This 177-nucleotide RNA was probed chemically with DMS and 2A3.
Conditions: 150 mM KOAc, 10 mM MgCl2 and 150 mM bicine (pH 8.5), 24 C.
For 2A3 the reverse transcriptase was SuperScript II with manganese.
It was measured as part of the RMDB library OK2TRN.

[RMDB]
RNA sequence: GGGAACGACUCGAGUAGAGUCGAAAAAGAAGGCCAGCAUAAACUGCGGUGCACGCCCAUGCAGCUACAGGACGGAAUCCCGUGCGCUGCUUCUAGCCCUAGAGAAGCUGAUGAUUCCUCGUAUCCACCCCGUGGAUGAGUUCGCUCAUCCACGGGGAAAAGAAACAACAACAACAAC
Reactivity to DMS in 0.01 (KOAc 150mM, MgCl2 10mM, bicine 150mM(pH8.5), 24C), signal-to-noise 1, nucleotides 027 to 126: a070g000a260a140g020g000c050c060a190g000c060a040u000a070a040a150c170u000g000c050g010g050u000g020c020a010c030g030c020c010c040a150u030g020c000a030g000c020u010a030c120a110g000g020a070c060g000g000a060a300u000c020c090c000g020u020g030c120g010c040u000g000c010u000u000c070u000a070g000c030c000c050u010a100g040a040g000a020a060g000c020u010g000a030u000g010a060u000u000c060c000u000c060g000u000a030u000c040c090a170
Reactivity to 2A3 in 0.01 (KOAc 150mM, MgCl2 10mM, bicine 150mM(pH8.5), 24C), signal-to-noise 1, nucleotides 027 to 126: a010g060a100a090g040g010c040c030a000g000c040a000u180a190a220a080c060u060g000c010g000g000u050g000c030a010c040g000c000c000c020a030u070g020c000a020g000c000u090a050c030a070g000g070a010c070g040g110a100a080u090c000c000c020g010u040g020c060g000c000u020g020c000u000u010c010u000a030g030c000c000c000u040a030g010a000g010a090a020g000c020u030g060a090u020g000a010u060u040c030c000u070c040g070u050a080u030c030c010a030